[RMDB]
Conditions: 150 mM KOAc, 10 mM MgCl2 and 150 mM bicine (pH 8.5), 24 C. This 177-nucleotide RNA was probed chemically with DMS and 2A3.
RNA sequence: GGGAACGACUCGAGUAGAGUCGAAAAAUUUAUCGAUUGGAUGGAUGGUGCACAAGUGUGGCCAGAAAAUAGCACUUGGAAAUGGCAAAUCAAUCUGGCUAAAAUCGUUCAGUCUUAUUUAUAAGACGAUACUACUACCUUUCGAGGUAGUAGUAUCAAAAGAAACAACAACAACAAC
Reactivity to DMS in 0.01 (KOAc 150mM, MgCl2 10mM, bicine 150mM(pH8.5), 24C), signal-to-noise 6, nucleotides 027 to 126: a060u010u010u010a060u010c040g010a080u010u010g010g000a050u000g020g010a050u010g000g020u010g000c040a090c050a040a040g010u010g020u000g000g000c040c020a030g010a050a060a080a100u020a170g000c010a020c010u000u020g010g010a080a070a100u040g010g000c050a070a090a080u020c130a060a080u010c010u000g000g000c030u030a050a050a070a050u030c070g010u000u010c100a130g010u000c000u000u000a010u020u010u020a070u010a030a000g010a020c020
Reactivity to 2A3 in 0.01 (KOAc 150mM, MgCl2 10mM, bicine 150mM(pH8.5), 24C), signal-to-noise 9, nucleotides 027 to 126: a000u140u140u070a110u080c040g030a030u030u080g070g020a030u030g080g000a040u040g040g060u090g020c020a020c010a110a040g020u020g030u040g100g010c010c010a020g070a010a110a010a020u160a020g010c010a010c030u020u030g050g040a030a100a100u100g070g010c040a060a050a060u080c030a010a060u020c010u010g020g000c000u040a040a040a020a110u110c070g020u060u040c020a030g010u000c010u030u050a110u130u200u040a220u060a050a010g010a020c030
The data come from the RNA Mapping Database (RMDB), library OK1LIB.